[RMDB]
Conditions: 150 mM KOAc, 10 mM MgCl2 and 150 mM bicine (pH 8.5), 24 C.
The record gives the reactivity of an RNA of 207 nucleotides to DMS and 2A3.
For 2A3 the reverse transcriptase was SuperScript II with manganese.
RNA sequence: GGGAACGACUCGAGUAGAGUCGAAAAUUACCGAGAACACACUCAUGAAACUUCCCGGCGCUAUGCGUAUGAAGUAUCAAGAGUUCCGUGAUGAGAAGACUCUCCACGUUCUCAACGGUACCGUUCUGGACAUGAUGGAAGUCUACGAGGAUCUCGAAAUUUAUAAGCUGUUCGCAGCUUAUAAAUUAAAAGAAACAACAACAACAAC
Reactivity to DMS in 0.01 (KOAc 150mM, MgCl2 10mM, bicine 150mM(pH8.5), 24C), signal-to-noise 2, nucleotides 027 to 156: u010u000a050c030c010g020a080g010a070a140c050a090c070a060c020u000c070a070u000g000a090a090a010c030u000u010c010c050c050g040g060c040g010c030u010a030u000g010c010g020u010a250u010g020a040a060g020u010a100u000c020a070a160g010a080g010u000u010c050c010g000u000g050a140u010g000a110g020a080a180g010a060c020u000c030u010c030c040a090c020g000u000u010c030u000c000a040a050c050g030g000u000a060c120c010g040u000u000c020u000g010g000a050c040a070u010g030a150u000g010g030a050a080g010u000c010u000a110c030g010a170g000g010a130u000c010u000c030g000a240
Reactivity to 2A3 in 0.01 (KOAc 150mM, MgCl2 10mM, bicine 150mM(pH8.5), 24C), signal-to-noise 3, nucleotides 027 to 156: u090u040a060c050c040g030a040g030a120a000c110a000c030a030c080u040c010a090u110g060a050a050a030c040u030u010c050c050c040g110g040c060g000c060u280a120u300g010c020g000u060a090u130g030a060a000g010u020a020u060c030a070a050g020a000g000u020u070c070c040g030u060g020a120u130g010a030g040a120a040g070a040c010u040c010u000c040c010a020c010g010u010u020c010u000c020a010a020c040g040g050u110a100c080c020g030u070u020c030u100g010g040a040c030a090u210g070a090u050g080g020a030a020g020u020c010u030a040c100g030a030g060g010a040u020c030u010c050g020a020